[RMDB]
RNA sequence: GGGAACGACUCGAGUAGAGUCGAAAAGAGUAUUUCAGAGAAAUGUCCCUCCAAGACGACAAGGACAGCUGAGUCAAUUUUACCGUUAUUCGUCGAUUACUGUAUAAUUUAUUUUUUUAUAUAUGAGAGGAUGAAUUGAUUUCGAUCAAUUCAUCCUAAAAGAAACAACAACAACAAC
Reactivity to 2A3 in 0.01 (KOAc 150mM, MgCl2 10mM, bicine 150mM(pH8.5), 24C), signal-to-noise 1, nucleotides 027 to 126: g010a000g030u120a130u060u210u060c050a140g050a060g080a110a120a220u160g010u020c020c020c000u050c060c000a210a100g050a050c060g010a000c000a020a000g030g020a010c030a020g020c020u030g010a080g030u050c020a000a000u000u060u050u150a080c000c000g060u140u200a030u080u050c030g000u010c070g060a000u070u130a060c020u030g080u060a070u140a260a020u120u060u000a140u000u000u280u010u000u000u030a170u060a000u100a140u300g010a130g010